RNA sequence: GGGAACGACUCGAGUAGAGUCGAAAAGAGAUCAUCCACUAACUUUCUUGCAUUGACCCACUGCUCGAGGACUCCUUCUCUUCCCGCUCGGGAUUUCUUCGUCUCGGACCGGCUCAUCUUCGGCAAAGUAGGGGGAACUUCGGUUCCCCCAAAAGAAACAACAACAACAAC
Reactivity to DMS in 0.01 (KOAc 150mM, MgCl2 10mM, bicine 150mM(pH8.5), 24C), signal-to-noise 1, nucleotides 027 to 129: g000a040g020a110u050c060a160u000c020c110a110c040u020a070a180c100u010u010u000c060u000u030g010c270a030u010u110g000a060c030c080c180a060c060u080g010c050u010c000g000a030g060g000a170c150u000c060c000u010u000c000u000c120u000u040c000c060c060g030c090u210c080g000g070g050a060u060u000u050c190u000u000c050g040u040c000u070c080g030g030a090c080c000g000g050c010u090c030a030u000c040u030u000c040g010g050c000a040a030a020g030u060a060
Reactivity to 2A3 in 0.01 (KOAc 150mM, MgCl2 10mM, bicine 150mM(pH8.5), 24C), signal-to-noise 3, nucleotides 027 to 129: g050a000g000a030u060c000a080u040c090c070a090c080u120a130a080c000u050u100u050c010u030u040g040c090a090u000u070g030a030c000c000c000a020c020u020g000c000u000c000g000a000g000g010a060c030u040c010c000u050u010c030u000c000u040u020c000c000c000g080c080u090c110g010g000g000a000u030u040u030c000u030u030c050g140u000c000u010c010g040g020a060c000c050g000g020c000u020c010a040u010c000u040u010c000g000g000c030a030a060a030g070u040a100
An RNA of 170 nucleotides, treated with DMS and 2A3 and read out base by base. 2A3 is a SHAPE reagent: it acylates the 2'-hydroxyl of flexible nucleotides of all four kinds. The reactions ran in a buffer of 150 mM KOAc, 10 mM MgCl2 and 150 mM bicine (pH 8.5), at 24 C. For 2A3, 3,507 sequencing reads were counted. The DMS profile rests on 3,488 reads.